[RMDB]
RNA sequence: GGGAACGACUCGAGUAGAGUCGAAAACGGUUUGUGCCACCCAAAGGUCGGCAAUGUUGGUAUCAUCUUCUUCAUCAAUAUCGCGGAAUACGUCGCGCUUGACACGAACACUGAGUGUAUCAUUAACGCAAUCCGAUUCAACAACACUAGGGGCGCCGGCAAUAGACAGGUUCGCCUGUCUAUUGCCAAAAGAAACAACAACAACAAC
Reactivity to 2A3 in 0.01 (KOAc 150mM, MgCl2 10mM, bicine 150mM(pH8.5), 24C), signal-to-noise 2, nucleotides 027 to 156: c010g000g060u030u130u120g120u120g030c020c030a120c000c000c000a080a200a060g050g050u110c070g010g070c030a060a040u070g020u100u060g040g030u020a090u110c070a080u010c070u160u010c000u070u050c010a080u010c010a130a070u110a080u300c080g020c020g040g110a060a070u160a190c110g070u110c020g070c000g010c000u020u010g030a020c010a020c220g070a080a020c050a060c230u160g040a030g040u050g010u070a040u040c030a040u010u080a040a070c040g010c050a010a030u040c050c000g060a010u130u110c000a090a130c050a080a020c030a040c140u110a000g080g000g000g010c000g020c060c070